[RMDB]
RNA sequence: GGGAACGACUCGAGUAGAGUCGAAAAGCAAGCUGAAGGACAAGGACGGCAAUUAUCUCUGGCAGCCGCCUGCCGCCAUUGGCGAAAAGGCUUCGUUCAUGGGGUUUGGCCUGGUGGAAGCCGAACAAUAUUUAGCUCGGUUCGCCGAGCUAAAUAUAAAAGAAACAACAACAACAAC
Reactivity to DMS in 0.01 (KOAc 150mM, MgCl2 10mM, bicine 150mM(pH8.5), 24C), signal-to-noise 2, nucleotides 027 to 126: g010c100a070a060g010c050u000g000a080a140g000g010a040c080a080a050g010g020a070c070g000g010c000a080a070u010u000a060u010c100u020c070u010g010g010c050a170g000c040c080g020c000c020u000g020c120c030g000c030c010a070u010u000g010g010c020g000a030a030a110a140g020g000c110u000u000c030g000u000u010c060a030u010g000g000g010g020u010u000u010g000g000c030c060u020g040g000u020g000g000a040a050g010c000c010g020a040a070c170a090
Record summary:
Chemical mapping of a 177-nucleotide RNA with DMS. Source: RMDB library OK2TST, as collected in RNAgym. Conditions: 150 mM KOAc, 10 mM MgCl2 and 150 mM bicine (pH 8.5), 24 C. For DMS the reverse transcriptase was MarathonRT. Reactivities are given for positions 27 through 126.